[RMDB]
RNA sequence: GGGAACGACUCGAGUAGAGUCGAAAAUACAAAAUGUAAGUGGUCACUUGGCGAUUUUGUAGUACAUGCAUGAGUUACCUUUUUUCUCUAUGUCUGAGAACUGUCAGAUUAAAACAAGAUGGCAAAGAGAUCGUUAGAGUGCACAACAAAAUCACUAGACCAAGGUCAAAUUCGUUUGACCUUGGUCAAAAGAAACAACAACAACAAC
Reactivity to 2A3 in 0.01 (KOAc 150mM, MgCl2 10mM, bicine 150mM(pH8.5), 24C), signal-to-noise 2, nucleotides 027 to 156: u240a010c030a050a120a030a070u230g050u110a110a100g040u020g000g070u130c010a000c010u010u010g010g000c010g000a000u010u000u000u070g080u090a060g010u030a110c010a020u010g130c090a070u060g000a000g110u050u070a190c050c030u210u110u070u020u120u000c030u000c020u030a040u050g020u000c030u010g080a110g060a200a100c040u070g030u020c020a010g000a060u120u120a060a100a000a070c090a020a000g040a050u000g000g000c000a000a000a140g050a010g000a000u000c000g010u000u010a110g000a000g080u030g040c020a030c000a050a050c030a000a020a080a060u200c170a040c100u270a050